This 177-nucleotide RNA was probed chemically with DMS.

RNA sequence: GGGAACGACUCGAGUAGAGUCGAAAAGAUAUGGACCGAGCCAACUUUCUUUCUGGGUCGGAAACGACCCAAUAAGACAGUUGGCGUUUGACGUCCUAAGUCGUGCAUCCCUCUUCGGAGGGAUGAAACAACCAACAUCGUUCGCGAUGUUGGUUGUAAAAGAAACAACAACAACAAC
Reactivity to DMS in 0.01 (KOAc 150mM, MgCl2 10mM, bicine 150mM(pH8.5), 24C), signal-to-noise 2, nucleotides 027 to 126: g010a050u000a300u000g000g000a010c010c010g000a120g000c000c000a000a010c010u000u000u010c000u000u000u000c110u010g000g020g020u000c000g010g000a040a060a180c010g010a020c000c000c000a010a000u000a000a010g050a010c050a010g010u000u000g000g010c000g010u010u010u010g020a130c300g000u000c000c010u000a040a100g000u000c010g000u020g010c000a010u000c010c000c000u000c000u000u030c290g020g010a020g000g000g000a000u000g000a040a110
Description:
For DMS, 1,992 sequencing reads were counted. Reactivities are rounded to 0.1 and cut off at 0 and 3. The data come from the RNA Mapping Database (RMDB), library TTRDEL. The RNA was probed in 150 mM KOAc, 10 mM MgCl2 and 150 mM bicine (pH 8.5) at 24 C.